The data come from the RNA Mapping Database (RMDB), library OK3TST. This 207-nucleotide RNA was probed chemically with 2A3. Values cover nucleotides 27 to 156. 2A3 adducts were read by reverse transcription with SuperScript II with manganese. For 2A3, 815 sequencing reads were counted. High 2A3 reactivity points to a flexible backbone, as in loops and unpaired stretches.
RNA sequence: GGGAACGACUCGAGUAGAGUCGAAAAAGGGUCUCCUUUCCUCCGGUAGAGCAGCCUAAGACCCCAGCCCAAGGUGGUGGCACCCACUUUAAGGAUAUGUCUUCUCAGCUCAAUGAACAUAAUCAAGGUAGCUUGAACGCUUAGAAGAUCGCCGGAAGACGGUACGUCACUUCGGUGACGUACCGUCAAAAGAAACAACAACAACAAC
Reactivity to 2A3 in 0.01 (KOAc 150mM, MgCl2 10mM, bicine 150mM(pH8.5), 24C), signal-to-noise 2, nucleotides 027 to 156: a000g040g010g000u030c010u080c020c000u090u060u060c000c020u020c050c000g020g000u040a040g000a000g030c100a020g010c020c020u030a090a000g040a020c000c050c000c000a020g000c000c020c000a000a030g020g020u030g030g010u060g240g000c110a000c010c050c000a040c000u020u080u090a050a040g020g010a030u060a150u300g020u040c000u000u000c010u000c010a090g000c020u010c020a030a060u180g060a030a020c040a080u210a180a070u260c060a150a000g140g000u050a030g140c000u000u030g050a050a050c020g000c000u000u030a000g030a010a000g000a030u060c020g020c000c000g030g080a010a140